An RNA of 207 nucleotides, treated with DMS and 2A3 and read out base by base. For DMS the reverse transcriptase was MarathonRT. For 2A3 the reverse transcriptase was SuperScript II with manganese. For 2A3, 1,737 sequencing reads were counted. Values cover nucleotides 27 to 156.

RNA sequence: GGGAACGACUCGAGUAGAGUCGAAAAUUUGCACCACGUAAGCAGUAUAGCUGCUAUGAUGAGGGUGUUGAUGGUUGGACAGAACUUAAGAUCAAGUUCUAUACUAAGCUUUACCAAAUGGCAACAACAUCACGUUGUAUAAAGCUUAUACAACUACCAGAAGAGCAACUUUCGAGUUGCUCUUCUGAAAAGAAACAACAACAACAAC
Reactivity to DMS in 0.01 (KOAc 150mM, MgCl2 10mM, bicine 150mM(pH8.5), 24C), signal-to-noise 2, nucleotides 027 to 156: u000u000u010g020c030a050c000c000a090c010g050u000a150a080g040c000a020g060u000a150u010a200g050c020u000g000c030u000a030u010g020a020u000g000a130g020g000g000u010g010u000u000g000a150u000g040g020u000u010g010g000a190c150a070g020a040a020c010u000u000a100a110g030a260u000c150a050a020g010u000u000c000u000a090u000a120c300u000a010a010g010c030u000u000u000a130c070c050a120a120a060u000g020g000c070a110a090c040a050a030c010a270u010c100a110c150g040u010u000g010u000a080u000a000a020a070g000c040u000u000a070u000a100c000a040a050c000u000a180c090
Reactivity to 2A3 in 0.01 (KOAc 150mM, MgCl2 10mM, bicine 150mM(pH8.5), 24C), signal-to-noise 4, nucleotides 027 to 156: u070u070u130g000c010a000c000c000a090c030g020u040a080a070g000c000a010g010u070a070u140a300g090c010u000g010c010u030a110u150g080a060u080g040a160g060g000g030u020g000u010u080g050a110u050g040g000u020u020g010g050a020c020a100g000a020a000c000u050u070a150a060g100a300u140c100a040a000g010u000u000c020u000a090u020a030c030u020a010a010g000c010u040u050u050a070c070c010a060a130a190u140g150g000c010a050a020c000a020a020c000a110u160c130a050c150g000u010u000g000u010a010u090a040a020a000g000c000u000u000a010u010a020c030a010a000c000u050a060c030